[RMDB]
An RNA of 207 nucleotides, treated with DMS and 2A3 and read out base by base. The 2A3 profile rests on 2,983 reads. In probing experiments dimethyl sulfate is read out at A N1 and C N3, which are open when not base-paired. The reactions ran in a buffer of 150 mM KOAc, 10 mM MgCl2 and 150 mM bicine (pH 8.5), at 24 C.
RNA sequence: GGGAACGACUCGAGUAGAGUCGAAAAAUCACUAGAUUCGUCUAGUGAUAAAAAAUCCUAAGUCGAGAUCUCUAGCGUGGGCUUUGAUCGUUCGGAAACGAACGGGAGCCUCGGGUACUCGAUAUGGAAAAAAUGGUGCAGUUUCGACUGCACCAAACAUUAUCAUAACCUUCGGGUUAUGAUAAUGAAAAGAAACAACAACAACAAC
Reactivity to DMS in 0.01 (KOAc 150mM, MgCl2 10mM, bicine 150mM(pH8.5), 24C), signal-to-noise 2, nucleotides 027 to 156: a040u000c000a000c010u000a010g000a020u030u000c300g030u010c000u010a040g020u000g010a000u030a010a000a100a120a050a110u000c020c010u000a070a180g010u000c000g020a040g010a190u000c050u020c060u010a180g020c130g000u020g040g040g030c010u000u010u000g000a170u000c010g010u000u000c020g010g000a160a120a240c000g000a010a050c000g020g000g010a010g000c000c000u010c040g010g010g020u000a230c010u000c010g010a000u000a300u010g020g020a000a020a080a130a060a120u000g030g020u010g000c000a010g020u000u000u010c270g030a110c020u000g000c000a000c000c020a010a040a060
Reactivity to 2A3 in 0.01 (KOAc 150mM, MgCl2 10mM, bicine 150mM(pH8.5), 24C), signal-to-noise 4, nucleotides 027 to 156: a000u010c010a000c010u020a020g010a010u050u050c180g020u020c110u000a010g000u000g000a000u000a010a000a000a000a000a000u030c010c000u030a090a010g020u000c010g010a010g020a150u040c050u040c090u300a120g150c060g150u270g070g020g000c000u200u110u040g110a110u170c010g000u000u000c010g010g030a110a070a080c010g000a010a010c010g000g020g000a000g000c000c000u000c010g000g000g010u040a130c010u000c000g000a000u000a040u070g010g000a040a030a060a120a010a050u140g000g020u000g010c000a010g010u010u050u210c160g090a030c000u000g000c000a000c000c010a000a000a010